[RMDB]
An RNA of 177 nucleotides, treated with DMS and 2A3 and read out base by base. The data come from the RNA Mapping Database (RMDB), library OK1LIB. The reactions ran in a buffer of 150 mM KOAc, 10 mM MgCl2 and 150 mM bicine (pH 8.5), at 24 C. DMS adducts were read by reverse transcription with MarathonRT. The DMS profile rests on 24,090 reads.
RNA sequence: GGGAACGACUCGAGUAGAGUCGAAAAGGGCACGCAGGAGGCGAAUCGACGAAAGAAAGCCUGCGAGGCAAGUACCGGGGAACAAAGUGCCAGGACCCGAUGACGAUGCUUAGGUACAAGCGAUGCCAAAUAUAAUUUAAUUCGUUAAAUUAUAUUUAAAAGAAACAACAACAACAAC
Reactivity to DMS in 0.01 (KOAc 150mM, MgCl2 10mM, bicine 150mM(pH8.5), 24C), signal-to-noise 9, nucleotides 027 to 126: g000g000g020c020a050c030g010c030a050g010g010a100g010g020c060g000a100a110u020c070g020a180c120g020a090a100a110g000a090a110a160g000c020c000u000g010c030g010a080g000g010c030a040a090g000u000a040c030c010g000g010g000g010a100a100c120a060a100a130g010u010g010c020c010a100g000g000a130c030c020c010g000a080u030g010a080c070g010a060u030g000c020u000u000a070g010g010u010a030c070a070a090g010c040g010a070u010g000c030c030
Reactivity to 2A3 in 0.01 (KOAc 150mM, MgCl2 10mM, bicine 150mM(pH8.5), 24C), signal-to-noise 6, nucleotides 027 to 126: g020g000g000c020a000c030g010c020a030g020g060a040g060g080c060g050a040a040u120c020g090a090c050g080a110a080a160g100a070a100a000g050c010c000u020g020c010g010a040g010g020c010a020a010g000u000a030c000c000g030g030g010g040a090a020c010a040a170a030g040u030g020c000c000a020g020g050a060c000c000c020g020a080u150g050a030c040g030a050u170g010c020u040u080a060g020g010u050a040c020a040a030g020c020g060a040u060g010c030c000